[RMDB]
RNA sequence: GGGAACGACUCGAGUAGAGUCGAAAAAUCUCAGGUCACGUGGGACGAACAUGGAAAAACCAUAUAUGUUGAUAGACUGUGCACAUUUACAUAUAGAGCUAGUUUUCAAUGGUUUCAUGAUACAGAACAAUACGGGUUAUUUCGAUAACCCGUAUUGAAAAGAAACAACAACAACAAC
Reactivity to 2A3 in 0.01 (KOAc 150mM, MgCl2 10mM, bicine 150mM(pH8.5), 24C), signal-to-noise 3, nucleotides 027 to 126: a020u020c010u000c020a040g010g100u080c020a010c090g050u040g000g020g020a010c020g040a120a050c040a060u050g010g020a070a070a020a030a030c010c020a020u040a000u000a020u080g070u060u060g030a050u030a080g080a040c080u090g050u110g180c050a010c000a060u060u120u110a060c020a030u130a020u040a100g080a010g040c080u060a030g040u040u000u010u050c020a010a040u040g050g000u000u030u050c020a010u050g040a030u040a140c060a010g050a090a020
Reactivity to DMS in 0.01 (KOAc 150mM, MgCl2 10mM, bicine 150mM(pH8.5), 24C), signal-to-noise 7, nucleotides 027 to 126: a080u010c010u010c020a150g000g000u000c060a060c070g020u000g010g010g010a050c070g010a080a220c080a030u000g000g000a040a070a030a060a060c050c040a090u000a040u000a040u000g000u000u000g000a040u000a080g010a080c070u010g010u000g000c080a120c080a040u000u000u010a050c060a030u010a050u000a060g010a110g030c100u000a060g010u000u000u000u000c040a060a050u000g000g010u000u000u000c020a030u010g000a110u000a060c100a100g010a150a180

An RNA of 177 nucleotides, treated with 2A3 and DMS and read out base by base. Conditions: 150 mM KOAc, 10 mM MgCl2 and 150 mM bicine (pH 8.5), 24 C. For DMS, 9,266 sequencing reads were counted.